Conditions: 150 mM KOAc, 10 mM MgCl2 and 150 mM bicine (pH 8.5), 24 C. Chemical mapping of a 207-nucleotide RNA with 2A3. For 2A3, 791 sequencing reads were counted. For 2A3 the reverse transcriptase was SuperScript II with manganese.
RNA sequence: GGGAACGACUCGAGUAGAGUCGAAAAUGGUCAUGUGACCUCGCCUUGACCGCCAUUAGGGGAGAUUCAUCCAGCGAUGGCAAAGGCGACCCGUGAGAGAGGCGACUGGGAUGGCACUGUUCUUAGGGUUAACAAGUACAAGUUCGGUUUAUUAUGGCUUGACCGAGUAGUUCGCUACUCGGUCAAGAAAAGAAACAACAACAACAAC
Reactivity to 2A3 in 0.01 (KOAc 150mM, MgCl2 10mM, bicine 150mM(pH8.5), 24C), signal-to-noise 2, nucleotides 027 to 156: u050g020g000u040c140a130u230g240u300g100a010c020c030u000c030g000c000c000u030u050g080a100c060c100g040c000c030a020u050u050a100g030g010g140g010a030g020a120u210u290c110a080u050c110c000a100g190c010g020a010u010g030g000c080a040a000a000g010g000c000g000a020c000c000c000g000u060g000a040g000a000g000a020g020g000c000g030a040c030u000g000g030g000a010u020g000g030c000a000c070u040g020u170u030c020u010u080a080g000g000g000u050u080a030a020c070a070a000g020u050a060c000a040a000g020u030u080c020g010g000u080u080u000a090u010u050a100u100g070g000